[RMDB]
RNA sequence: GGGAACGACUCGAGUAGAGUCGAAAAGAUAUGGACCCAAGGGAGAUCCACUCGGAAACGAGUGAAGAUCGAAGAACUUGGUCCUAAGUCAAAGUAAGGUUAGGUUCUUCGGAACCUAACCUUACAACAACGAAUCAUUCUUCGGAAUGAUUCGUUGAAAAGAAACAACAACAACAAC
Reactivity to 2A3 in 0.01 (KOAc 150mM, MgCl2 10mM, bicine 150mM(pH8.5), 24C), signal-to-noise 1, nucleotides 027 to 126: g000a000u040a010u070g000g010a020c020c050c040a010a010g050g000g030a020g000a010u020c010c000a010c000u010c000g010g010a030a000a000c000g010a000g010u030g020a070a060g020a010u010c030g050a080a010g000a020a000c010u000u020g010g010u070c000c010u000a020a000g000u010c030a140a030a070g000u010a000a000g030g000u000u000a010g000g030u020u000c010u080u150c300g030g000a000a000c000c000u010a000a000c000c000u000u000a000c000a000a000
Reactivity to DMS in 0.01 (KOAc 150mM, MgCl2 10mM, bicine 150mM(pH8.5), 24C), signal-to-noise 3, nucleotides 027 to 126: g010a000u000a070u000g000g000a020c180c050c040a010a020g000g000g000a030g010a010u000c010c000a000c000u000c000g030g010a010a020a030c000g010a020g010u000g000a100a090g000a020u000c010g000a120a150g010a070a250c000u000u000g000g020u000c000c000u000a010a120g000u000c010a100a090a120g000u000a000a010g000g010u000u000a010g000g010u000u000c000u010u020c210g030g010a010a000c000c000u000a000a000c010c000u000u010a000c000a090a150